[RMDB]
RNA sequence: GGGAACGACUCGAGUAGAGUCGAAAAGAUAUGGAGAAUUCUUUUGACGUUCGAGUGUUCGGAAACGAACACGAGAACGAUAAGAAUCUCCUAAGUCAAAAUCCUUUGUGCUUCGGCACAAAGGAAACCUAGUUAACCAGUUCGCUGGUUAACUAGGAAAAGAAACAACAACAACAAC
Reactivity to 2A3 in 0.01 (KOAc 150mM, MgCl2 10mM, bicine 150mM(pH8.5), 24C), signal-to-noise 2, nucleotides 027 to 126: g060a010u080a030u200g020g050a020g060a140a300u020u000c030u120u140u060u100g180a130c060g000u000u000c020g020a040g040u020g030u010u000c000g020g020a090a110a050c010g000a000a000c000a010c000g000a000g010a000a000c000g000a000u030a010a020g000a000a000u010c000u000c010c000u020a160a030g030u050c030a030a030a000a300u030c000c000u010u020u010g020u000g010c020u060u090c220g170g000c020a000c020a010a000a050g000g000a010a010a010
Reactivity to DMS in 0.01 (KOAc 150mM, MgCl2 10mM, bicine 150mM(pH8.5), 24C), signal-to-noise 2, nucleotides 027 to 126: g000a020u000a300u000g000g020a070g000a070a070u010u000c010u000u000u000u010g000a200c140g020u020u000c000g000a300g020u010g000u010u000c010g000g020a110a090a120c010g010a020a000c010a000c000g000a300g000a000a010c010g020a050u000a000a000g010a050a030u000c000u000c000c000u000a060a160g000u020c050a040a160a130a100u000c010c000u000u000u000g010u000g000c000u010u000c250g010g000c000a000c000a000a000a010g000g000a000a030a080